Structure probing data (2A3 and DMS) for a 177-nucleotide construct. Values cover nucleotides 27 to 126.
RNA sequence: GGGAACGACUCGAGUAGAGUCGAAAAUCGGCCGGCCGGCCUAGAAACUUGAGCGGAUAAGUUAGUGGAUCAAUCGAAUAUUAGAUUCUAUAUUUUUACGUGCGAUAGCUUACGCGCGAAGUAACAAGGGUAAUAUAAUCUUCGGAUUAUAUUACCCAAAAGAAACAACAACAACAAC
Reactivity to 2A3 in 0.01 (KOAc 150mM, MgCl2 10mM, bicine 150mM(pH8.5), 24C), signal-to-noise 5, nucleotides 027 to 126: u090c000g010g010c010c000g020g050c040c070g070g000c010c010u020a080g090a080a100a010c010u060u090g030a020g020c040g030g050a080u030a190a060g050u030u130a050g040u080g080g040a020u030c020a010a020u040c050g120a110a030u110a100u190u060a080g070a100u100u000c030u030a110u010a040u090u050u000u080u110a040c010g000u010g020c010g020a040u020a070g020c020u040u080a030c010g000c000g000c000g020a010a020g040u040a040a020c040a050a100
Reactivity to DMS in 0.01 (KOAc 150mM, MgCl2 10mM, bicine 150mM(pH8.5), 24C), signal-to-noise 5, nucleotides 027 to 126: u010c090g010g020c020c010g000g020c060c060g000g010c060c020u000a060g000a110a080a060c040u000u010g000a090g010c020g000g000a070u010a030a050g010u000u020a060g010u010g010g000a030u010c040a050a080u030c140g010a070a070u040a110u020u010a100g000a080u030u020c040u010a070u020a010u010u030u010u030u030a090c040g010u000g000c150g020a100u010a050g020c090u000u010a040c050g020c010g000c000g010a040a050g010u010a050a060c190a090a170

DMS adducts were read by reverse transcription with MarathonRT.
The DMS profile rests on 9,934 reads.